[RMDB]
RNA sequence: GGGAACGACUCGAGUAGAGUCGAAAAAAAGAUAUGGACCGAAGCAAGGUCUAAGCAAGCGAUGAAAUUUAUCGGAAACGAUAAAUGGAGCUUGAACGCGACUGAUGACCUUCGGUCCUAAGUCAAACAUAAGCAACUGGUUCGCCAGUUGCUUAUGAAAAGAAACAACAACAACAAC
Reactivity to 2A3 in 0.01 (KOAc 150mM, MgCl2 10mM, bicine 150mM(pH8.5), 24C), signal-to-noise 1, nucleotides 027 to 126: a000a000a000g080a030u090a030u130g050g010a020c010c000g020a010a000g050c050a120a220g000g000u000c010u010a060a000g070c010a010a000g010c020g280a300u040g050a020a010a020u000u010u010a010u000c020g020g090a070a060a040c010g010a010u010a010a000a000u000g010g010a010g000c050u000u000g020a160a020c050g020c040g040a000c000u030g090a250u160g050a300c010c000u070u000c060g000g000u030c000c000u000a030a000g000u000c030a120a060a070
Reactivity to DMS in 0.01 (KOAc 150mM, MgCl2 10mM, bicine 150mM(pH8.5), 24C), signal-to-noise 3, nucleotides 027 to 126: a060a100a050g020a050u010a300u000g000g000a010c010c010g000a040a030g030c070a140a110g000g020u000c010u000a170a130g000c020a000a020g000c000g020a110u000g020a080a070a010u000u000u010a000u000c010g030g020a130a060a140c020g010a020u000a010a000a000u000g000g000a020g000c010u000u010g000a010a040c080g040c270g000a040c000u000g000a160u040g000a120c300c000u000u010c000g000g010u000c000c010u000a000a140g000u000c010a050a140a240

The record gives the reactivity of an RNA of 177 nucleotides to 2A3 and DMS. For DMS, 2,121 sequencing reads were counted. The data come from the RNA Mapping Database (RMDB), library TTRDES. For 2A3, 2,037 sequencing reads were counted. 2A3 adducts were read by reverse transcription with SuperScript II with manganese. 2A3 is a SHAPE reagent: it acylates the 2'-hydroxyl of flexible nucleotides of all four kinds.